[RMDB]
RNA sequence: GGGAACGACUCGAGUAGAGUCGAAAAAGUCCUUGGAACUGAAGUGGUAACACCAGGUUUAAGCGUAGGACAGGGAGCAACAGAGCCGAAACGAAAGUGAAGCGAUUGAGCUGGGAAAUUAGUAUGAACCAAGGGUGAUAUUCGUAUCACCCUUGGUAAAAGAAACAACAACAACAAC
Reactivity to DMS in 0.01 (KOAc 150mM, MgCl2 10mM, bicine 150mM(pH8.5), 24C), signal-to-noise 5, nucleotides 027 to 126: a160g010u000c010c000u000u020g020g010a030a030c030u000g030a140a200g000u000g010g010u040a100a140c050a070c000c010a300g000g010u000u010u000a120a140g020c050g020u030a050g030g010a040c020a080g010g010g010a080g020c110a020a120c140a050g010a170g000c030c020g020a100a040a050c050g000a080a060a120g040u020g000a150a060g010c040g000a120u000u000g010a230g030c030u000g030g000g000a040a090a080u040u020a050g010u000a070u010g020a080
Reactivity to 2A3 in 0.01 (KOAc 150mM, MgCl2 10mM, bicine 150mM(pH8.5), 24C), signal-to-noise 2, nucleotides 027 to 126: a000g000u010c000c000u000u020g120g010a000a000c010u000g030a140a000g020u010g150g000u070a090a000c010a020c010c000a030g040g000u000u130u040a160a000g130c200g080u110a000g010g000a010c010a000g000g000g020a040g000c040a090a160c000a030g070a010g070c000c000g000a100a060a070c050g030a130a050a150g020u020g030a010a000g010c030g030a030u050u130g010a100g050c000u060g000g030g030a000a030a000u060u070a120g040u060a070u200g180a000
Chemical mapping of a 177-nucleotide RNA with DMS and 2A3. Reactivities are rounded to 0.1 and cut off at 0 and 3.